[RMDB]
Annotation
Structure probing data (2A3 and DMS) for a 177-nucleotide construct. The 2A3 profile rests on 3,862 reads. 2A3 adducts were read by reverse transcription with SuperScript II with manganese. For DMS the reverse transcriptase was MarathonRT. Reactivities are given for positions 27 through 126.

RNA sequence: GGGAACGACUCGAGUAGAGUCGAAAAGAUAUGGAACUCAGACGCAUCGAUCAAAUACCCAUAUUAUAGCACCUCGGAAACGAGGUGAAUGUAGUGGGUAUUUGGGAGCGUCUGAAGUUCCUAAGUCCAUUUCAUCUUACUUCGGUAAGAUGAAAUGAAAAGAAACAACAACAACAAC
Reactivity to 2A3 in 0.01 (KOAc 150mM, MgCl2 10mM, bicine 150mM(pH8.5), 24C), signal-to-noise 2, nucleotides 027 to 126: g060a000u090a100u200g000g000a010a000c000u000c020a010g020a010c010g090c030a270u300c100g150a120u110c060a020a000a000u000a010c020c010c000a040u100a240u200u090a080u070a030g120c010a010c000c010u020c000g030g040a050a050a030c000g000a000g000g000u000g010a010a090u070g000u060a150g180u050g000g020g010u030a010u000u000u000g010g030g000a020g000c000g000u000c010u000g000a000a000g000u010u000c000c010u010a020a030g000u050c010
Reactivity to DMS in 0.01 (KOAc 150mM, MgCl2 10mM, bicine 150mM(pH8.5), 24C), signal-to-noise 2, nucleotides 027 to 126: g000a070u010a270u010g000g030a020a020c010u000c010a030g000a030c010g040c000a250u000c260g000a100u020c010a000a030a020u000a000c000c000c000a060u010a100u020u000a030u000a070g020c010a000c000c000u000c000g000g000a080a070a180c010g020a010g000g020u000g000a020a020u010g020u010a050g010u000g000g000g000u000a000u010u000u000g000g000g000a050g030c000g040u000c010u000g000a010a020g000u000u000c000c000u000a030a110g000u000c040